The data come from the RNA Mapping Database (RMDB), library OK2TST. Structure probing data (DMS and 2A3) for a 177-nucleotide construct. For 2A3, 1,645 sequencing reads were counted. For 2A3 the reverse transcriptase was SuperScript II with manganese. The RNA was probed in 150 mM KOAc, 10 mM MgCl2 and 150 mM bicine (pH 8.5) at 24 C. DMS adducts were read by reverse transcription with MarathonRT.
[RMDB]
RNA sequence: GGGAACGACUCGAGUAGAGUCGAAAACGUCGGCCGAUCUGGACAUGGCACUGCGCGCAAUCGCUUUUGGCGCCAUGGGCACCGCCGGUCAGCGCUGCACCACAUUGCGCCGUCUUUUCGUGCACGAUCCACGUAUCCCUUUCGAGGGAUACGUGGAAAAAGAAACAACAACAACAAC
Reactivity to DMS in 0.01 (KOAc 150mM, MgCl2 10mM, bicine 150mM(pH8.5), 24C), signal-to-noise 2, nucleotides 027 to 126: c160g030u000c040g040g010c010c000g000a090u000c050u000g010g000a190c060a020u000g030g020c010a060c060u000g010c080g020c010g010c180a080a060u010c080g000c070u000u000u000u000g000g000c000g020c060c090a060u010g010g000g000c050a070c080c020g000c060c050g010g010u000c090a090g020c010g020c110u000g020c040a190c080c030a050c150a000u010u020g000c080g000c020c040g000u000c030u010u000u020u010c060g010u000g010c050a100c120g010a130
Reactivity to 2A3 in 0.01 (KOAc 150mM, MgCl2 10mM, bicine 150mM(pH8.5), 24C), signal-to-noise 2, nucleotides 027 to 126: c010g060u020c030g060g010c010c030g020a100u000c040u090g030g040a020c020a070u050g020g020c020a000c020u060g040c030g000c000g020c080a080a130u070c050g030c020u070u100u100u280g070g030c020g000c010c000a020u020g000g000g000c030a050c060c030g000c030c020g060g140u060c010a040g000c000g010c010u040g010c020a050c030c010a050c040a020u020u070g000c110g000c030c020g000u080c050u010u060u030u060c050g020u060g030c040a000c080g040a020